This 177-nucleotide RNA was probed chemically with DMS and 2A3. For DMS the reverse transcriptase was MarathonRT. Reactivities are rounded to 0.1 and cut off at 0 and 3. Reactivities are given for positions 27 through 126. Conditions: 150 mM KOAc, 10 mM MgCl2 and 150 mM bicine (pH 8.5), 24 C. 2A3 adducts were read by reverse transcription with SuperScript II with manganese.

[RMDB]
RNA sequence: GGGAACGACUCGAGUAGAGUCGAAAAAUUUUCCUUAUAUGAUCUGGUCCCACCGUGGGCAGCACUGCAUGCCCAGAGCCUGAGAGGAUUAUGAAAACAUGGCAAGGGAAGUGAGGCCAGGGAACCCUUUAUGCGCAGCUUUCGAGCUGCGCAUAAAAAAAGAAACAACAACAACAAC
Reactivity to DMS in 0.01 (KOAc 150mM, MgCl2 10mM, bicine 150mM(pH8.5), 24C), signal-to-noise 1, nucleotides 027 to 126: a050u170u000u000u000c020c010u030u040a300u070a080u000g020a180u000c000u000g000g030u000c000c000c010a000c040c100g020u020g020g000g000c010a010g000c040a140c260u040g070c000a150u000g020c000c020c000a080g000a110g040c000c040u000g000a230g000a260g020g030a140u010u060a090u060g000a120a060a110a090c010a020u030g010g000c000a130a240g010g010g000a030a070g040u000g010a130g000g030c000c000a110g040g000g000a040a020c000c090c080
Reactivity to 2A3 in 0.01 (KOAc 150mM, MgCl2 10mM, bicine 150mM(pH8.5), 24C), signal-to-noise 2, nucleotides 027 to 126: a000u140u150u010u050c020c000u040u020a300u040a130u100g050a060u030c000u040g050g000u010c000c000c000a000c000c000g090u030g000g000g010c000a030g000c040a060c240u300g000c010a090u060g000c000c000c010a000g040a030g060c010c010u110g050a140g000a080g190g000a060u180u100a080u300g120a060a100a000a050c060a040u100g060g000c040a030a110g090g020g030a070a000g010u030g020a010g000g040c000c000a000g020g030g000a070a070c000c000c000